[RMDB]
RNA sequence: GGGAACGACUCGAGUAGAGUCGAAAAAUCUGCUGGAGAACCGCCAUCUACUUUGCAUCGUUCUUUUGUGUACAAAUUUUUAAAGGAGCGGUGUUGAUGGCACUACGGUUUUUUGGUGGAGAAUUGAGUUACUGUUAUUGUUCGCAAUAACAGUAACAAAAGAAACAACAACAACAAC
Reactivity to DMS in 0.01 (KOAc 150mM, MgCl2 10mM, bicine 150mM(pH8.5), 24C), signal-to-noise 6, nucleotides 027 to 126: a100u000c000u000g020c010u000g010g000a020g010a010a000c010c010g000c010c010a020u000c010u010a110c260u020u020u050g000c010a020u000c010g010u000u000c010u000u000u000u000g000u020g030u010a140c300a070a080a100u020u030u020u030u020a010a020a030g000g010a010g000c000g020g020u000g020u000u000g010a010u000g000g000c120a070c160u020a090c190g000g000u010u000u000u000u010u000g010g030u000g000g010a030g010a080a110u010u010g010a300
Reactivity to 2A3 in 0.01 (KOAc 150mM, MgCl2 10mM, bicine 150mM(pH8.5), 24C), signal-to-noise 9, nucleotides 027 to 126: a000u010c000u010g000c000u010g010g010a010g000a000a010c000c010g000c000c000a000u000c010u070a140c110u140u210u280g010c000a010u010c000g010u000u000c000u000u030u020u010g130u020g030u040a080c080a090a250a140u120u140u150u210u270a040a040a000g010g000a000g000c000g000g000u000g000u030u070g000a000u000g010g020c010a010c010u080a030c020g000g000u000u000u000u000u010u010g020g000u020g020g010a040g040a070a090u110u180g070a090
Source: RMDB libraries RFM100 and RFMREP, as collected in RNAgym. The record gives the reactivity of an RNA of 177 nucleotides to DMS and 2A3. Reactivities are given for positions 27 through 126. DMS adducts were read by reverse transcription with MarathonRT. Conditions: 150 mM KOAc, 10 mM MgCl2 and 150 mM bicine (pH 8.5), 24 C.